[RMDB]
RNA sequence: GGGAACGACUCGAGUAGAGUCGAAAACGCUGGGAAUGAGUGGAAUACUAGCUUUUGACGAGGGAAUACUGAAGCGCGCACGGUAUAUGCCUCGAUAAGCUAGUAUUCGUAACAUCUCAUUCCUGUGCUGAAGCGCGCACGGCAACCGAAAGGUGCGGAUAAUCUUUACGUUCGCGUAAAGAUUAUCAAAAGAAACAACAACAACAAC
Reactivity to DMS in 0.01 (KOAc 150mM, MgCl2 10mM, bicine 150mM(pH8.5), 24C), signal-to-noise 2, nucleotides 027 to 156: c070g030c040u010g000g000g000a040a010u010g010a020g030u000g020g010a040a010u010a010c010u000a010g010c010u000u000u000u010g020a230c030g020a040g020g020g010a130a030u010a020c000u010g010a060a100g010c030g030c010g000c010a300c020g000g030u010a010u000a050u000g010c020c000u000c020g020a060u000a010a050g020c000u000a020g020u000a000u010u000c000g050u010a070a150c080a100u000c000u000c010a020u000u010c010c000u000g000u010g010c000u000g020a100a070g020c020g000c030g010c010a100c000g010g000c030a130a170c020c020g000a090a180a170g000g010u000g020c040g000
Reactivity to 2A3 in 0.01 (KOAc 150mM, MgCl2 10mM, bicine 150mM(pH8.5), 24C), signal-to-noise 7, nucleotides 027 to 156: c050g000c010u050g020g010g010a000a000u010g000a010g020u080g040g030a000a000u010a000c000u000a000g010c000u030u090u120u290g220a100c040g000a000g000g010g070a050a030u010a010c010u030g040a220a080g030c020g000c010g000c030a010c030g000g030u020a040u020a020u230g140c010c000u020c020g070a120u090a160a010g000c000u000a000g000u000a000u000u000c000g000u030a010a010c010a100u080c000u000c010a000u000u000c000c000u010g030u030g000c000u070g020a060a020g000c010g000c000g000c020a010c010g080g020c030a130a170c030c010g040a080a030a020g020g010u030g010c000g010